[RMDB]
The record gives the reactivity of an RNA of 177 nucleotides to 2A3 and DMS. 2A3 is a SHAPE reagent: it acylates the 2'-hydroxyl of flexible nucleotides of all four kinds. The reactions ran in a buffer of 150 mM KOAc, 10 mM MgCl2 and 150 mM bicine (pH 8.5), at 24 C.
RNA sequence: GGGAACGACUCGAGUAGAGUCGAAAAAUAUUGUUGGGUCCCCUAGUCGAGUCGCUACUGUAUGCCGGCGGUGUGCUUGAACCGCCGAGCGUCGAGGCAAAACAGCGUCGCGUGGAGAUAUACGUGAGGUAUUGUUAGAGUUCGCUCUAACAAUACCAAAAGAAACAACAACAACAAC
Reactivity to 2A3 in 0.01 (KOAc 150mM, MgCl2 10mM, bicine 150mM(pH8.5), 24C), signal-to-noise 2, nucleotides 027 to 126: a000u140a060u080u120g060u100u090g140g080g070u070c000c030c000c010u040a030g110u030c010g000a000g030u030c000g010c050u060a030c010u040g010u090a030u070g020c000c000g010g000c000g000g010u060g040u050g080c140u160u240g040a060a000c000c000g000c010c000g000a000g000c010g010u030c040g030a010g000g080c020a030a050a120a080c040a070g030c010g060u030c000g010c020g000u030g060g100a170g010a060u100a030u050a090c060g040u050g070a070
Reactivity to DMS in 0.01 (KOAc 150mM, MgCl2 10mM, bicine 150mM(pH8.5), 24C), signal-to-noise 4, nucleotides 027 to 126: a090u020a060u010u000g010u000u000g000g000g010u010c040c010c010c060u010a080g010u010c010g000a060g020u010c010g030c050u000a160c060u000g020u010a050u000g010c040c010g010g000c020g010g010u000g000u010g020c190u000u010g000a070a020c000c000g000c000c000g000a040g020c010g010u000c060g000a080g010g010c050a060a060a060a100c190a060g010c060g000u000c020g000c030g010u000g010g010a110g000a080u010a070u000a050c080g010u010g000a190